[RMDB]
RNA sequence: GGGAACGACUCGAGUAGAGUCGAAAAUCAUGGUGCAUUCCUUGCCCCGCAGUUGGGGCAGUCAUCGAAGCGCUGAUGCUCUGUGAGGAAGCGUCCGCAGCCGGCGCAAUUCAGCCUGGUGCUGUAAGCGAGAUAGUCUGUUCGCAGACUAUCUCGCAAAAGAAACAACAACAACAAC
Reactivity to DMS in 0.01 (KOAc 150mM, MgCl2 10mM, bicine 150mM(pH8.5), 24C), signal-to-noise 1, nucleotides 027 to 126: u010c030a050u000g000g010u000g010c080a090u000u000c040c030u000u000g020c010c010c010c020g020c130a170g050u020u010g000g000g010g010c000a020g040u000c080a080u030c120g020a140a110g000c060g080c090u020g000a010u010g010c060u000c040u000g010u000g000a060g030g010a100a160g010c040g000u000c020c030g020c070a020g010c010c040g000g010c010g000c010a100a100u000u000c100a040g030c060c010u000g030g040u000g020c010u000g000u000a100a160